RNA sequence: GGGAACGACUCGAGUAGAGUCGAAAAGAGUUGUAAUUUGGAGAGGACACUUCGGGUGCGGCCACGGCAUAAGUUCCUUGGAACAGGACGUCAUAGAGGGUGAGAAUCCCGUCUUUGGCUGCUGGACCGAUCAUACGGAUUUCGAUCCGUAUGAUCGAAAAGAAACAACAACAACAAC
Reactivity to DMS in 0.01 (KOAc 150mM, MgCl2 10mM, bicine 150mM(pH8.5), 24C), signal-to-noise 5, nucleotides 027 to 126: g000a120g020u010u020g020u010a060a150u010u000u000g010g020a120g000a090g010g000a070c100a030c090u000u020c100g020g030g010u010g000c030g000g000c020c030a060c070g000g000c050a060u020a060a090g010u000u000c010c000u000u010g010g010a070a160c050a020g000g010a100c130g000u010c030a050u020a060g000a210g000g000g000u000g000a200g010a150a170u010c010c010c000g010u020c000u000u000u000g000g000c010u000g020c020u000g000g000a160c110
Reactivity to 2A3 in 0.01 (KOAc 150mM, MgCl2 10mM, bicine 150mM(pH8.5), 24C), signal-to-noise 3, nucleotides 027 to 126: g060a010g030u000u060g030u100a130a200u070u080u100g040g000a060g010a020g010g050a040c020a010c020u030u120c100g080g000g000u080g020c040g020g030c050c010a030c050g010g000c040a050u050a120a030g050u100u070c000c000u010u050g060g000a060a010c020a000g010g040a040c040g000u040c010a020u020a070g040a020g030g000g000u020g020a070g010a030a020u020c000c000c010g130u010c000u020u020u060g040g000c040u030g030c000u020g030g060a010c020

An RNA of 177 nucleotides, treated with DMS and 2A3 and read out base by base. For DMS the reverse transcriptase was MarathonRT. 2A3 adducts were read by reverse transcription with SuperScript II with manganese. The data come from the RNA Mapping Database (RMDB), libraries RFM100 and RFMREP.